Structure probing data (DMS and 2A3) for a 207-nucleotide construct.

RNA sequence: GGGAACGACUCGAGUAGAGUCGAAAACGCAGACGGUUCUGAUAACAAAGAACCUAGAUAGCCGCAUCGGUAUUAUAGGAUGUAGUCGGUGAGCCGGAAUGCCUGCAUCGUAAGCCUAUAAGUAAAUUUAAGUGUAAUCACUUCGGUGAUUACACAACCCAUCUACGUAGUUCGCUACGUAGAUGGGAAAAGAAACAACAACAACAAC
Reactivity to DMS in 0.01 (KOAc 150mM, MgCl2 10mM, bicine 150mM(pH8.5), 24C), signal-to-noise 1, nucleotides 027 to 156: c070g030c010a030g010a160c160g000g100u000u000c000u000g000a110u000a150a200c300a090a130a040g040a000a030c010c000u020a090g020a240u000a070g010c070c070g050c000a090u010c060g000g010u000a050u010u000a040u010a080g000g000a040u010g040u000a140g060u000c060g010g050u010g030a020g020c000c000g000g020a040a080u000g000c020c020u010g000c020a040u010c040g000u000a040a150g040c040c020u000a090u000a040a170g010u020a080a040a130u000u000u000a050a160g040u000g000u000a030a000u000c000a010c010u010u000c260g040g060u000g020a040u000u000a010c000a000c050a010a050
Reactivity to 2A3 in 0.01 (KOAc 150mM, MgCl2 10mM, bicine 150mM(pH8.5), 24C), signal-to-noise 3, nucleotides 027 to 156: c110g000c030a040g030a060c040g000g050u010u010c020u000g050a130u100a270a040c030a040a130a030g000a010a000c000c000u000a010g010a090u110a070g040c060c020g050c070a070u090c070g140g000u090a050u130u030a020u070a030g080g000a030u050g030u080a040g050u070c020g000g040u030g030a000g060c030c030g080g060a110a020u110g040c000c000u030g060c000a010u000c010g020u050a040a020g020c010c020u060a050u010a130a000g130u100a050a110a220u170u260u120a160a010g000u010g000u000a000a000u000c000a000c000u000u010c100g050g000u000g000a000u000u000a000c000a000c000a000a000
The reactions ran in a buffer of 150 mM KOAc, 10 mM MgCl2 and 150 mM bicine (pH 8.5), at 24 C.
2A3 adducts were read by reverse transcription with SuperScript II with manganese.
Values cover nucleotides 27 to 156.